[RMDB]
RNA sequence: GGGAACGACUCGAGUAGAGUCGAAAACGGUGAUGGAGGCUCGCGCGAACUCGCGGGCGCGGUUCCAGAUGUUCCGUAGCGGGCGGAAGAGCUCCAUGGUCUGCAGCGUCUGGCCCGUCAGGCGGGCAGCCUUCCCUACAUUCGUGUAGGGAAGGCUAAAAGAAACAACAACAACAAC
Reactivity to DMS in 0.01 (KOAc 150mM, MgCl2 10mM, bicine 150mM(pH8.5), 24C), signal-to-noise 3, nucleotides 027 to 126: c080g010g000u010g000a090u010g020g020a070g010g020c020u000c040g020c040g020c120g010a090a100c140u010c050g020c050g000g010g030c020g040c060g000g000u000u010c010c040a100g010a110u000g000u000u010c020c030g030u000a120g020c020g010g010g020c020g000g000a040a040g000a150g030c020u000c040c050a060u010g000g010u000c070u010g010c160a050g010c010g020u000c010u000g000g000c070c000c000g020u000c080a040g010g000c000g000g000g020c080
Reactivity to 2A3 in 0.01 (KOAc 150mM, MgCl2 10mM, bicine 150mM(pH8.5), 24C), signal-to-noise 2, nucleotides 027 to 126: c030g030g040u090g050a100u050g030g040a040g120g010c050u060c070g020c020g020c020g110a100a060c040u030c060g060c180g020g010g030c020g010c020g040g000u050u020c010c000a020g020a130u110g040u160u070c010c020g020u000a040g000c060g010g040g000c020g050g090a080a000g030a110g060c010u000c030c000a070u110g100g000u090c050u060g020c010a040g050c010g000u050c020u040g160g000c000c000c000g050u040c020a010g060g110c010g000g020g000c020